About this RNA: An RNA of 177 nucleotides, treated with DMS and 2A3 and read out base by base. For 2A3 the reverse transcriptase was SuperScript II with manganese. The DMS profile rests on 2,571 reads. For 2A3, 4,150 sequencing reads were counted.
[RMDB]
RNA sequence: GGGAACGACUCGAGUAGAGUCGAAAAAUCUUGGAGCGCAACCCCGCAUAUCCAUGCAGCUUGACAACCAGUGUCGCCCAUGAUGACACUCCCGAAAGCGGGACGUGACACUCUCCCUCACCAAAACCAAUUUAUAUAGGUUCGCCUAUAUAAAUUGAAAAGAAACAACAACAACAAC
Reactivity to DMS in 0.01 (KOAc 150mM, MgCl2 10mM, bicine 150mM(pH8.5), 24C), signal-to-noise 3, nucleotides 027 to 126: a070u010c030u000u000g030g000a070g010c060g010c100a090a130c060c050c010c070g000c050a070u000a090u000c090c080a050u010g020c060a070g020c100u010u000g010a060c080a050a140c060c060a060g010u010g010u000c030g000c010c050c040a050u000g020a050u000g000a110c040a040c050u000c010c000c010g000a090a120a130g020c040g000g000g000a000c160g010u000g020a120c020a080c070u010c050u000c000c010c010u010c050a060c120c100a040a040a090a070c220
Reactivity to 2A3 in 0.01 (KOAc 150mM, MgCl2 10mM, bicine 150mM(pH8.5), 24C), signal-to-noise 4, nucleotides 027 to 126: a000u020c020u030u060g020g010a090g040c020g020c030a030a050c030c010c020c000g000c030a100u110a090u080c090c030a020u060g040c020a030g030c030u090u150g040a050c030a050a060c070c040a080g020u030g050u120c030g040c020c010c010a050u120g010a020u050g000a010c000a010c050u030c010c010c010g090a280a210a020g240c040g010g010g010a010c070g020u030g000a010c000a010c060u050c010u000c010c020c010u040c020a070c020c020a050a120a010a000c020